[RMDB]
Source information
The record gives the reactivity of an RNA of 177 nucleotides to DMS and 2A3. For DMS, 1,780 sequencing reads were counted. The RNA was probed in 150 mM KOAc, 10 mM MgCl2 and 150 mM bicine (pH 8.5) at 24 C. The data come from the RNA Mapping Database (RMDB), library OK1LIB. For DMS the reverse transcriptase was MarathonRT.
RNA sequence: GGGAACGACUCGAGUAGAGUCGAAAAGCUCGGAGACGAGCAAGGCUGACAAAACUCUGUCCCCACCUCCACGUGGUGUCGGCUGGAUAAUGCUGCAUUAUGUUGCAUUUAUCAACUGGGAAGCAAAAGCUACUCGUAUCUUCGGAUACGAGUAGCUAAAAGAAACAACAACAACAAC
Reactivity to DMS in 0.01 (KOAc 150mM, MgCl2 10mM, bicine 150mM(pH8.5), 24C), signal-to-noise 2, nucleotides 027 to 126: g000c000u000c000g000g000a300g000a230c000g030a000g030c010a070a070g040g000c000u020g000a140c040a100a060a100a080c110u040c050u010g000u000c000c000c020c010a100c020c020u080c010c020a050c080g060u050g010g010u020g020u000c000g000g030c050u000g040g000a050u000a000a020u000g020c000u000g000c000a020u030u080a130u040g010u000u030g020c020a000u040u000u010a010u000c020a160a080c110u030g000g020g010a130a180g000c170a100a000a070
Reactivity to 2A3 in 0.01 (KOAc 150mM, MgCl2 10mM, bicine 150mM(pH8.5), 24C), signal-to-noise 4, nucleotides 027 to 126: g020c000u000c000g050g020a120g010a050c010g000a000g000c000a000a030g040g000c020u020g000a010c020a030a070a060a070c050u050c050u090g080u050c040c000c000c000a010c000c010u030c010c010a120c060g010u080g030g020u050g020u010c010g050g000c000u060g010g050a020u000a040a000u020g000c040u050g000c010a090u080u100a140u300g010u030u030g000c000a010u060u070u100a080u030c010a020a030c060u070g010g000g040a070a030g040c050a070a090a020